[RMDB]
RNA sequence: GGGAACGACUCGAGUAGAGUCGAAAAUUUCUUGACACACUUCACAGAUGAUGGUGCCUUCAUGUCGGCAUGACGCAUUAUCUCCAUACCAAAGAAUGAUCCGACAAUAUCUCCUUCCUAUUUGAUCUGUGUAGUACAAGUUCGCUUGUACUACACAAAAAGAAACAACAACAACAAC
Reactivity to 2A3 in 0.01 (KOAc 150mM, MgCl2 10mM, bicine 150mM(pH8.5), 24C), signal-to-noise 4, nucleotides 027 to 126: u020u030u000c000u020u100g060a010c010a000c020a020c120u060u090c030a050c020a060g100a130u070g010a020u050g050g040u030g010c010c010u030u100c070a080u090g090u090c010g050g100c040a010u030g040a010c020g000c010a040u050u040a040u070c040u000c020c010a070u060a160c020c020a100a040a030g070a030a090u070g010a050u020c020c010g030a030c050a060a050u060a070u090c040u010c010c020u020u000c020c000u090a160u140u080u080g080a070u030c040
Reactivity to DMS in 0.01 (KOAc 150mM, MgCl2 10mM, bicine 150mM(pH8.5), 24C), signal-to-noise 5, nucleotides 027 to 126: u000u010u000c020u000u000g030a110c110a090c060a080c050u000u010c060a080c090a080g000a060u000g000a070u000g000g020u000g010c040c030u000u010c090a080u010g020u010c110g010g000c070a030u000g010a070c300g000c050a050u000u000a070u000c020u000c040c030a080u000a100c080c060a070a100a090g000a080a040u000g000a060u000c020c030g000a070c080a030a090u000a080u000c030u000c020c020u000u000c020c020u000a070u000u000u000g010a120u000c090